[RMDB]
RNA sequence: GGGAACGACUCGAGUAGAGUCGAAAAGAGUCAUACAACCCCAGAAACCAUUCCUUAUACCUUGAGUAUUGCUGAAUUCAGGUUAGCGUGCAUGCUCUUGGCUAUUCUCAUAGUGAUUGUCAAAUUUAAAACGACGAUGACUUCGGUCAUCGUCGAACACUAGGUAUGGGUUCGCCCAUACCUAGUGAAAAGAAACAACAACAACAAC
Reactivity to 2A3 in 0.01 (KOAc 150mM, MgCl2 10mM, bicine 150mM(pH8.5), 24C), signal-to-noise 3, nucleotides 027 to 156: g040a000g060u110c050a010u040a260c060a100a170c000c010c000c030a030g110a050a060a030c060c010a090u070u060c020c030u100u120a070u040a110c000c000u050u080g020a040g030u060a090u150u060g010c030u020g080a150a140u180u240c100a090g060g120u060u090a030g000c040g080u060g010c020a010u030g030c000u000c010u020u030g010g000c000u010a040u050u090c090u010c060a090u120a120g080u130g120a210u050u130g000u060c020a040a020a120u140u150u220a070a130a080a010c000g000a000c000g000a000u000g010a000c000u060u060c190g040g000u000c000a000u000c000g000u000c000g000a000a000
Reactivity to DMS in 0.01 (KOAc 150mM, MgCl2 10mM, bicine 150mM(pH8.5), 24C), signal-to-noise 1, nucleotides 027 to 156: g030a130g010u000c030a120u000a120c040a090a110c020c010c070c020a100g000a140a120a080c050c030a110u010u000c020c010u000u010a190u010a030c030c020u010u020g030a090g010u000a040u020u000g000c000u000g000a050a130u000u010c100a110g000g010u010u000a070g010c130g000u020g090c070a070u000g000c010u000c000u000u010g000g040c010u020a080u030u010c010u010c000a150u000a140g030u000g010a100u000u000g020u000c030a030a080a090u000u000u020a050a060a140a170c000g030a050c000g030a010u000g000a030c010u000u000c300g010g010u010c000a030u010c000g070u010c000g010a020a030

The record gives the reactivity of an RNA of 207 nucleotides to 2A3 and DMS. Conditions: 150 mM KOAc, 10 mM MgCl2 and 150 mM bicine (pH 8.5), 24 C. For DMS, 1,628 sequencing reads were counted.